[RMDB]
RNA sequence: GGGAACGACUCGAGUAGAGUCGAAAAAGUGAGUAUGGCUCGGUACGACGAGCCAUACUCACAACGGUUUUCCUAAAUCGUCGUGAGACGGACCUUGGAAAACCUAGUAUUUAAAUAACUAGGUCAAAUUAGCCUAGAUCCUUCGGGAUCUAGGCAACUAGCUAGAUUAGUUCGCUAAUCUAGCUAGAAAAGAAACAACAACAACAAC
Reactivity to DMS in 0.01 (KOAc 150mM, MgCl2 10mM, bicine 150mM(pH8.5), 24C), signal-to-noise 2, nucleotides 027 to 156: a170g020u000g010a040g060u000a030u010g010g000c000u010c010g020g030u000a130c210g000a150c010g020a030g030c010c010a000u000a010c010u000c000a000c000a050a030c060g060g010u010u000u010u010c010c020u000a030a040a040u000c020g050u000c000g060u000g010a300g010a030c050g000g000a020c040c010u000u000g000g000a040a050a070a040c000c010u000a040g000u000a050u010u000u000a090a150a230u000a110a140c090u000a030g000g020u000c030a090a070a130u010u020a130g010c000c000u000a000g010a020u000c000c010u000u020c300g020g020g010a010u010c000u000a000g010g010c000a000a000
Reactivity to 2A3 in 0.01 (KOAc 150mM, MgCl2 10mM, bicine 150mM(pH8.5), 24C), signal-to-noise 4, nucleotides 027 to 156: a000g010u000g000a000g010u000a010u010g000g010c010u020c120g020g030u270a190c170g080a030c010g000a170g020c000c000a000u000a000c000u000c000a000c000a000a000c000g000g000u000u010u000u000c000c000u000a010a000a000u060c000g000u000c010g010u030g130a120g000a030c000g000g000a000c000c000u010u010g000g000a010a000a000a000c000c000u000a010g010u010a030u040u100u110a100a180a130u120a070a020c070u040a010g010g000u000c020a000a060a140u170u170a040g000c010c000u000a000g000a000u000c000c000u010u090c220g060g000g000a000u000c000u000a000g000g000c000a000a000